[RMDB]
RNA sequence: GGGAACGACUCGAGUAGAGUCGAAAACUGAGACGCUUCGGCGUCUCAGAAAUGGAACACUGGCGAAGGAAGCAAGAGCUAUCAUGCCAAUGACCACGUGGAAAACUCAUACGUUCGCGUAUGAGAACAUAGAUCACUACUUCGGUAGUGAUCUAUGAAAAGAAACAACAACAACAAC
Reactivity to 2A3 in 0.01 (KOAc 150mM, MgCl2 10mM, bicine 150mM(pH8.5), 24C), signal-to-noise 6, nucleotides 027 to 126: c010u000g000a000g000a000c010g020c020u040u070c210g160g000c010g020u000c000u000c000a000g000a000a000a000u060g010g030a110a020c010a010c050u010g010g010c050g060a150a100g090g040a030a000g050c060a170a160g080a060g150c020u070a150u300c010a040u170g000c000c010a000a020u030g030a030c020c020a040c110g060u170g060g100a050a080a050a070c000u010c000a000u000a020c000g020u010u050c250g000c000g080u000a000u010g000a000g000a000a000
Reactivity to DMS in 0.01 (KOAc 150mM, MgCl2 10mM, bicine 150mM(pH8.5), 24C), signal-to-noise 6, nucleotides 027 to 126: c000u000g000a000g020a010c000g030c000u000u010c190g040g020c000g020u000c000u000c000a000g010a040a080a090u000g010g000a090a100c030a020c040u010g010g010c020g000a110a140g000g010a050a050g000c020a150a110g010a140g020c030u000a090u000c040a110u010g020c010c010a030a020u000g010a180c020c000a090c200g010u010g000g000a060a090a070a140c000u000c000a000u000a000c000g010u010u010c260g010c010g020u000a000u000g000a000g000a060a110
The data come from the RNA Mapping Database (RMDB), library M2PK50. Structure probing data (2A3 and DMS) for a 177-nucleotide construct. Conditions: 150 mM KOAc, 10 mM MgCl2 and 150 mM bicine (pH 8.5), 24 C. DMS adducts were read by reverse transcription with MarathonRT.